[RMDB]
An RNA of 177 nucleotides, treated with 2A3 and DMS and read out base by base.
For 2A3 the reverse transcriptase was SuperScript II with manganese.
For DMS the reverse transcriptase was MarathonRT.
It was measured as part of the RMDB library 15KREP.

RNA sequence: GGGAACGACUCGAGUAGAGUCGAAAAGAUGAUGCCUCUCGGUUACUUCAUACCGUGCUUGCAAAGGCUGAGUUAUGCUGUUCUGCACGCAUGGUUUGGAGAGAGUGGUGCAAUGUCUGUGGCAUAAACUUAGUACUACGUUCGCGUAGUACUAAGUAAAAGAAACAACAACAACAAC
Reactivity to 2A3 in 0.01 (KOAc 150mM, MgCl2 10mM, bicine 150mM(pH8.5), 24C), signal-to-noise 7, nucleotides 027 to 126: g020a020u140g020a040u070g000c000c000u000c000u000c000g080g030u120u170a080c000u000u010c000a000u010a010c000c000g000u010g000c000u000u010g000c000a030a050a050g020g000c000u050g070a120g230u230u180a110u200g010c010u030g110u190u030c050u040g000c000a000c020g000c000a000u010g010g000u030u020u010g010g000a020g010a010g000a000g010u060g020g030u070g000c010a020a060u080g010u000c030u040g080u060g080g020c060a080u110a110a140
Reactivity to DMS in 0.01 (KOAc 150mM, MgCl2 10mM, bicine 150mM(pH8.5), 24C), signal-to-noise 8, nucleotides 027 to 126: g010a030u000g010a120u000g010c000c010u000c010u000c010g010g020u010u010a150c020u000u000c010a020u000a020c010c000g030u000g000c000u000u000g000c010a020a080a270g000g010c000u000g010a230g030u010u010a060u010g010c000u000g010u010u010c220u000g000c000a010c080g000c010a010u000g000g010u000u000u000g000g000a020g010a110g000a030g010u000g010g020u010g010c060a060a060u000g010u000c020u010g000u000g010g010c120a080u000a060a090